[RMDB]
RNA sequence: GGGAACGACUCGAGUAGAGUCGAAAAUUUGUGAAAAUGAGGAUCGCCGGUGUAUGCCGACACGUAAUGGUGUAGGGGAGAUCAAGAAGGUGUGGUCGGCCUCUCGUUUUUGGCAAAAACUUGCGUGCUAUAUUAUAAAUUUCGAUUUAUAAUAUAGAAAAGAAACAACAACAACAAC
Reactivity to 2A3 in 0.01 (KOAc 150mM, MgCl2 10mM, bicine 150mM(pH8.5), 24C), signal-to-noise 1, nucleotides 027 to 126: u020u000u040g010u000g010a050a030a020a030u070g000a020g000g030a080u080c020g000c000c000g020g020u040g000u020a020u020g020c010c000g030a000c000a010c030g020u060a050a010u140g130g000u020g040u040a020g010g000g000g000a030g000a030u100c020a020a000g110a010a020g040g000u090g000u010g050g040u030c000g010g150c000c010u000c000u000c000g010u000u000u030u080u020g060g000c000a000a000a000a000a030c010u040u050g020c010g030u010g000
Reactivity to DMS in 0.01 (KOAc 150mM, MgCl2 10mM, bicine 150mM(pH8.5), 24C), signal-to-noise 3, nucleotides 027 to 126: u010u010u020g000u020g000a050a050a040a040u000g000a060g000g010a080u010c100g000c020c010g020g000u020g000u020a120u000g000c020c010g030a030c070a010c020g000u000a030a050u030g010g010u020g020u000a050g000g000g010g010a270g000a060u000c070a050a100g020a100a080g010g030u030g020u000g010g020u010c040g010g000c010c040u000c020u000c040g000u010u020u010u010u010g010g040c030a010a040a080a120a050c050u010u000g010c030g000u010g000

This 177-nucleotide RNA was probed chemically with 2A3 and DMS. For DMS, 6,440 sequencing reads were counted. The data come from the RNA Mapping Database (RMDB), library OK1LIB. For 2A3, 1,665 sequencing reads were counted.